[RMDB]
RNA sequence: GGGAACGACUCGAGUAGAGUCGAAAACGGUGUUUCCAUCGGUACUGCAUCUUCCAUCUAUGUGGCAUCUGCGUUGGCUCUGAAACUGGGUAUGAAGCGCGAACACAUGUUGCAGCAGAAAGUGGAAUGAUCCUCAAUGAUUCGUCAUUGAGGAUCAAAAAGAAACAACAACAACAAC
Reactivity to DMS in 0.01 (KOAc 150mM, MgCl2 10mM, bicine 150mM(pH8.5), 24C), signal-to-noise 5, nucleotides 027 to 126: c080g010g020u000g010u000u010u000c070c030a090u000c070g020g020u000a090c090u010g030c080a080u000c090u000u010c040c010a030u000c030u000a150u010g010u000g000g020c050a030u000c020u000g010c030g030u010u000g010g030c010u010c010u000g010a170a080a070c120u010g000g020g010u000a050u000g010a120a060g020c100g000c020g000a030a020c020a040c070a020u010g010u010u000g010c020a090g000c030a040g000a050a130a100g010u010g000g010a050a110
Reactivity to 2A3 in 0.01 (KOAc 150mM, MgCl2 10mM, bicine 150mM(pH8.5), 24C), signal-to-noise 4, nucleotides 027 to 126: c030g040g040u060g030u060u110u070c050c010a040u050c010g060g040u080a060c010u070g030c010a070u020c030u110u000c020c010a040u010c050u080a040u040g040u020g060g010c060a070u000c030u060g010c020g050u030u040g090g010c000u000c010u050g060a080a100a090c110u200g120g010g030u200a090u170g100a040a010g020c000g000c020g030a010a010c030a000c000a040u100g010u040u030g010c010a040g000c010a010g060a070a070a010g010u020g030g000a040a080
The record gives the reactivity of an RNA of 177 nucleotides to DMS and 2A3. For 2A3, 4,654 sequencing reads were counted. Source: RMDB library OK2TST, as collected in RNAgym.